[RMDB]
RNA sequence: GGGAACGACUCGAGUAGAGUCGAAAAAUGAAUGUUUAAGACCCAUAGAAGAGCCUAUUCUAGAAUCCGAAUGGAUUUAUCAACCAUUAGAUGUGUCUGAUAUUUUGAGAAGAUGGAGGCCAGAUCCUGGGGAAACAUUAUUCGUAAUGUUUCCCCAAAAAGAAACAACAACAACAAC
Reactivity to DMS in 0.01 (KOAc 150mM, MgCl2 10mM, bicine 150mM(pH8.5), 24C), signal-to-noise 2, nucleotides 027 to 126: a060u010g000a110a100u020g000u000u020u020a100a180g010a150c010c020c000a210u020a110g020a070a190g000a170g010c030c050u000a020u000u000c020u000a130g000a070a050u000c010c010g000a150a080u020g000g010a020u000u010u000a060u010c070a060a070c160c020a030u020u000a100g000a100u010g000u000g010u000c070u000g000a040u020a020u000u010u010u000g000a120g010a060a070g010a060u000g000g010a060g000g020c020c050a080g020a060u010c100c180
An RNA of 177 nucleotides, treated with DMS and read out base by base. Values cover nucleotides 27 to 126. The reactions ran in a buffer of 150 mM KOAc, 10 mM MgCl2 and 150 mM bicine (pH 8.5), at 24 C. In probing experiments dimethyl sulfate is read out at A N1 and C N3, which are open when not base-paired. DMS adducts were read by reverse transcription with MarathonRT.